[RMDB]
RNA sequence: GGGAACGACUCGAGUAGAGUCGAAAAGAUAUGGAUGUGUCAAGGGAGCUCAGUCGGAAACGACGAGCGAGGAUCUUGCACAUCCUAAGUCAAAACACCAUAGCUUCGUUCGCGAAGCUAUGGUGAAGGUCUAUGUUCAGUUCGCUGAACAUAGACCAAAAGAAACAACAACAACAAC
Reactivity to 2A3 in 0.01 (KOAc 150mM, MgCl2 10mM, bicine 150mM(pH8.5), 24C), signal-to-noise 2, nucleotides 027 to 126: g050a010u080a030u150g010g000a000u000g010u000g160u300c050a010a000g000g000g000a010g010c010u020c080a110g020u000c000g010g060a050a080a060c010g010a000c000g000a000g000c000g020a090g010g000a000u000c000u000u010g000c010a000c010a000u000c000c000u000a000a000g020u010c050a040a030a070a090c010a010c000c000a010u000a000g000c000u030u010c020g090u090u050c300g040c020g210a000a000g000c010u000a000u010g070g010u000g000a000a000
Reactivity to DMS in 0.01 (KOAc 150mM, MgCl2 10mM, bicine 150mM(pH8.5), 24C), signal-to-noise 2, nucleotides 027 to 126: g000a040u000a300u010g020g000a010u020g000u000g000u030c010a010a000g000g000g000a020g000c000u010c000a040g010u010c000g000g010a110a060a150c000g010a020c020g010a040g000c000g000a050g020g000a030u000c000u000u000g000c000a000c010a000u000c010c000u000a010a050g010u010c030a130a070a070a160c000a010c000c010a010u000a000g010c000u000u000c000g000u000u000c170g040c020g010a020a010g000c000u000a000u000g000g000u000g000a020a040